[RMDB]
RNA sequence: GGGAACGACUCGAGUAGAGUCGAAAAUCGGCCCGACGCCAAACGGAGCUUGCUCUUACGUUGUGCACGGCGGACGUAGGGGGACUUUUGUCUGUGCUAAGACUCUGGCGCGUGCGGUGCAGGCCUAGCAGAGUCCGACAAACGCAGUACGCACCGCGCAUUCAUGUUGCUUCGGCAACAUGAAUGCAAAAGAAACAACAACAACAAC
Reactivity to 2A3 in 0.01 (KOAc 150mM, MgCl2 10mM, bicine 150mM(pH8.5), 24C), signal-to-noise 1, nucleotides 027 to 156: u130c020g070g020c000c010c020g070a120c080g090c050c050a120a080a050c060g060g010a260g010c020u150u300g020c010u190c000u010u000a020c000g010u010u010g040u090g080c010a000c000g020g000c060g000g010a020c010g000u030a020g000g010g000g030g000a000c020u190u140u060u230g130u090c000u000g000u000g010c010u020a020a000g000a010c000u020c010u070g040g050c150g000c000g040u040g000c000g000g000u000g000c010a050g000g110c010c010u040a060g010c010a000g000a000g000u000c000c010g030a000c080a020a180a030c170g130c120a030g060u130a020c030g010c000a010c020c000g000c000